[RMDB]
RNA sequence: GGGAACGACUCGAGUAGAGUCGAAAAGAUCAUGAUAUGGACCCAUCGUAUUCAACAGCGCACGUAACAUCAAAUCGGAAACGAUUUGUGGUGCGACAUGAAUGCCGUGGGUCCUAAGUCUCAACUCGUACAAGCUGAUCUUCGGAUCAGCUUGUACAAAAGAAACAACAACAACAAC
Reactivity to DMS in 0.01 (KOAc 150mM, MgCl2 10mM, bicine 150mM(pH8.5), 24C), signal-to-noise 2, nucleotides 027 to 126: g000a080u010c120a160u000g010a110u010a300u000g020g000a020c010c010c000a020u020c300g040u000a020u010u000c000a000a090c290a270g030c020g000c000a020c000g010u020a150a150c200a030u000c000a000a000a000u010c000g000g040a100a080a080c000g040a020u000u000u000g030u000g010g010u010g000c010g000a010c080a170u020g010a040a000u000g010c000c070g010u000g030g020g010u000c000c000u030a020a070g000u000c010u000c080a110a130c190u000c100